Conditions: 150 mM KOAc, 10 mM MgCl2 and 150 mM bicine (pH 8.5), 24 C. Structure probing data (2A3 and DMS) for a 177-nucleotide construct. For 2A3, 3,028 sequencing reads were counted. Values are in units of 0.01, from 0 to 300, in steps of 10.
RNA sequence: GGGAACGACUCGAGUAGAGUCGAAAAGGGAGGGUAUAGCGCGGCUUAUGAGGCUACGCGGAGGUAUGAGCGUGGGGAGAUUGAGGUUCUGAGCUGGUCUUCUAGGUGGGAGUCUGCGUGGUCUAAGCGCUGCAUAGCUAUUCGUAGCUAUGCAGCGAAAAGAAACAACAACAACAAC
Reactivity to 2A3 in 0.01 (KOAc 150mM, MgCl2 10mM, bicine 150mM(pH8.5), 24C), signal-to-noise 5, nucleotides 027 to 126: g040g060g060a200g070g030g020u110a130u130a140g040c040g000c010g080g000c010u130u040a130u300g190a030g030g000c000u030a020c000g000c010g010g030a060g030g030u080a150u210g100a070g030c070g000u090g040g000g040g010a070g010a000u020u140g300a070g020g010u150u050c050u040g060a050g050c020u010g010g040u020c020u060u000c020u040a040g020g020u150g070g020g000a050g050u030c030u030g010c040g010u020g000g000u000c000u030a030a050g000
Reactivity to DMS in 0.01 (KOAc 150mM, MgCl2 10mM, bicine 150mM(pH8.5), 24C), signal-to-noise 2, nucleotides 027 to 126: g000g000g000a080g010g000g000u040a060u020a140g030c040g000c010g020g030c110u000u020a050u060g020a130g040g000c040u010a010c040g030c030g000g000a070g000g030u060a090u010g000a130g010c080g000u030g030g050g010g010a010g000a010u000u000g020a130g030g020u040u030c140u000g040a070g010c060u020g000g000u000c060u020u000c040u000a040g000g000u020g000g000g000a060g000u000c050u000g020c040g020u020g010g000u000c000u030a080a070g000
Notes: It was measured as part of the RMDB library OK1LIB. 2A3 adducts were read by reverse transcription with SuperScript II with manganese.